Chemical mapping of a 207-nucleotide RNA with 2A3. The 2A3 profile rests on 429 reads. Values cover nucleotides 27 to 156.
[RMDB]
RNA sequence: GGGAACGACUCGAGUAGAGUCGAAAAGAACAAGAAGACGCCGAAGCAACUUAAGGUCGCCGCGCACGAACUGGCGCUCGAUCUCCGCCUCGCUCGAGUAGGUUUCCCCGGGGAACCCUCUUCGCGCCCUUGCCACCAUACAGGUAAGUCACGUAGACAACCAAGGUUUGUUCGCAAACCUUGGUUGAAAAGAAACAACAACAACAAC
Reactivity to 2A3 in 0.01 (KOAc 150mM, MgCl2 10mM, bicine 150mM(pH8.5), 24C), signal-to-noise 1, nucleotides 027 to 156: g060a070a010c070a000a020g300a040a010g090a120c120g040c150c130g150a160a040g050c050a100a070c030u140u190a040a000g050g020u030c000g010c060c120g020c030g020c010a070c230g160a300a160c210u270g020g000c000g000c020u000c000g060a090u000c020u040c010c000g000c040c000u000c000g000c020u000c000g010a000g000u000a030g150g000u040u070u010c000c000c000c030g000g040g010g000a000a020c010c030c010u080c000u070u100c020g000c040g040c090c000c000u020u080g000c010c000a090c000c030a030u170a220c090a090g000g060u010a030a000g080u090c010a000c070g070u060a040g040a130